[RMDB]
RNA sequence: GGGAACGACUCGAGUAGAGUCGAAAAUUGAAAUUGAACCGUCCUGUUAUCCAAAGAUAGGCAGAAGAUACGAAAUGUGUGACAGCAUGGGAAGUAAAGGCAGACCGUGGUUCCCUUGAGUAUCUUAAUUAGGGGGACGAGUUCGCUCGUCCCCCAAGGUAUGAUCUAUCUUCGGAUAGAUCAUACCAAAAGAAACAACAACAACAAC
Reactivity to DMS in 0.01 (KOAc 150mM, MgCl2 10mM, bicine 150mM(pH8.5), 24C), signal-to-noise 2, nucleotides 027 to 156: u010u000g020a110a110a120u010u010g020a080a120c030c040g000u000c020c010u010g040u000u000a080u010c070c060a080a090a150g010a040u000a030g000g050c050a090g000a040a080g020a030u010a030c060g000a090a100a030u020g000u000g040u020g040a150c190a170g020c040a070u000g020g040g000a100a120g010u000a050a080a140g050g000c050a120g000a160c000c040g000u000g000g000u000u000c000c000c020u000u020g000a160g030u000a050u000c020u000u000a020a150u010u000a160g000g000g010g040g020a000c010g020a040g000u000u000c200g000c040u000c000g020u010c000c000c000c000c000a000a000
Reactivity to 2A3 in 0.01 (KOAc 150mM, MgCl2 10mM, bicine 150mM(pH8.5), 24C), signal-to-noise 1, nucleotides 027 to 156: u110u120g050a020a020a020u060u090g020a100a020c050c010g030u000c020c010u030g010u070u040a070u140c030c010a170a000a000g070a000u050a010g020g020c030a040g060a220a010g010a020u030a040c040g050a010a100a050u130g030u030g050u090g030a010c080a060g010c000a000u050g010g010g030a090a000g100u210a030a070a070g090g020c030a020g010a050c000c030g040u010g020g150u000u020c000c000c000u000u030g020a020g000u000a010u040c020u000u010a100a080u220u210a090g040g000g000g000g020a010c020g050a010g020u070u040c180g000c070u000c000g000u000c020c000c000c000c000a000a000
The record gives the reactivity of an RNA of 207 nucleotides to DMS and 2A3.
It was measured as part of the RMDB library M2RFPK.
For DMS the reverse transcriptase was MarathonRT.
2A3 adducts were read by reverse transcription with SuperScript II with manganese.
The reactions ran in a buffer of 150 mM KOAc, 10 mM MgCl2 and 150 mM bicine (pH 8.5), at 24 C.